[RMDB]
RNA sequence: GGGAACGACUCGAGUAGAGUCGAAAAAAAGGCGUUGCUAGUGGGCAGUGCUGACCUCUGGACCGGCGAUCCGCGACGAGAGACGCCCCCGCGACAUCAUCAAAUUGCGGGGACUCCCUAAAGCUGUGUGCUACUAAGCAGGUGCCGAAACGACCUGGAUAUGUAGAGAGUUCGCUCUCUACAUAUCAAAAGAAACAACAACAACAAC
Reactivity to DMS in 0.01 (KOAc 150mM, MgCl2 10mM, bicine 150mM(pH8.5), 24C), signal-to-noise 2, nucleotides 027 to 156: a050a040a060g020g020c020g060u010u000g010c000u000a120g000u000g000g050g030c040a070g010u000g030c050u000g010a050c040c010u000c070u000g040g000a070c070c040g010g040c050g020a130u000c030c010g000c050g010a100c100g010a150g010a030g020a090c110g020c000c000c000c000c010g000c000g000a030c060a140u000c080a190u020c220a080a110a030u010u000g000c030g010g020g010g010a020c040u000c000c000c010u000a060a140a150g050c000u000g010u000g000u010g020c010u000a120c080u010a040a130g030c010a070g000g000u000g040c020c060g020a070a090a100c070g010a120c030c010u010g000
Reactivity to 2A3 in 0.01 (KOAc 150mM, MgCl2 10mM, bicine 150mM(pH8.5), 24C), signal-to-noise 5, nucleotides 027 to 156: a000a000a040g050g000c050g050u050u010g010c000u030a040g070u080g030g030g030c020a040g020u040g070c030u020g030a060c010c000u040c070u100g060g020a100c070c020g020g000c050g090a100u070c020c030g020c030g040a060c050g020a040g000a010g010a050c050g100c000c000c000c010c000g000c010g020a040c010a150u270c000a020u060c020a050a120a160u070u060g000c000g010g000g010g000a000c010u010c020c010c000u100a140a120a020g020c030u030g050u020g030u070g200c010u020a060c010u050a090a030g000c010a020g020g110u070g040c050c040g040a050a030a010c050g030a040c000c010u030g060
The record gives the reactivity of an RNA of 207 nucleotides to DMS and 2A3. The RNA was probed in 150 mM KOAc, 10 mM MgCl2 and 150 mM bicine (pH 8.5) at 24 C. For DMS the reverse transcriptase was MarathonRT. For 2A3, 4,763 sequencing reads were counted. Values cover nucleotides 27 to 156. The data come from the RNA Mapping Database (RMDB), library RSTRND. For 2A3 the reverse transcriptase was SuperScript II with manganese. For DMS, 4,295 sequencing reads were counted.